[RMDB]
An RNA of 177 nucleotides, treated with DMS and 2A3 and read out base by base. DMS adducts were read by reverse transcription with MarathonRT. It was measured as part of the RMDB library TTRDES. In probing experiments dimethyl sulfate is read out at A N1 and C N3, which are open when not base-paired. The DMS profile rests on 9,455 reads.

RNA sequence: GGGAACGACUCGAGUAGAGUCGAAAAGAUAUGGAGUUCAUGACAUGCGAGCCAUCGGAAACGAUGGACCUCGCAACAGCAUGAAACUCCUAAGUCAAAGGCUUCCCAACUUCGGUUGGGAAGCCAAUCACUAAACAUGGUUCGCCAUGUUUAGUGAAAAAGAAACAACAACAACAAC
Reactivity to DMS in 0.01 (KOAc 150mM, MgCl2 10mM, bicine 150mM(pH8.5), 24C), signal-to-noise 5, nucleotides 027 to 126: g000a030u000a060u010g000g000a020g020u000u000c010a000u000g000a070c040a300u010g020c010g010a020g010c000c000a000u000c000g010g000a010a010a030c000g010a020u000g000g000a050c300c010u000c000g020c010a080a060c190a120g020c000a010u000g010a040a030a030c000u000c000c000u000a010a070g000u000c010a140a150a140g010g010c000u000u000c000c000c000a010a000c000u000u020c200g020g010u000u000g000g000g000a000a000g010c000c000a000a010
Reactivity to 2A3 in 0.01 (KOAc 150mM, MgCl2 10mM, bicine 150mM(pH8.5), 24C), signal-to-noise 3, nucleotides 027 to 126: g020a000u030a010u070g000g010a000g000u000u010c000a010u020g190a300c090a150u300g040c010g010a010g030c000c000a010u000c000g010g000a010a020a000c010g000a000u010g010g010a030c030c010u000c000g000c010a030a010c020a010g000c000a010u010g050a100a050a030c000u010c000c000u010a010a000g000u010c050a150a080a070g010g000c010u000u000c000c000c000a010a010c020u110u110c290g160g000u000u000g000g000g000a000a000g000c010c000a000a000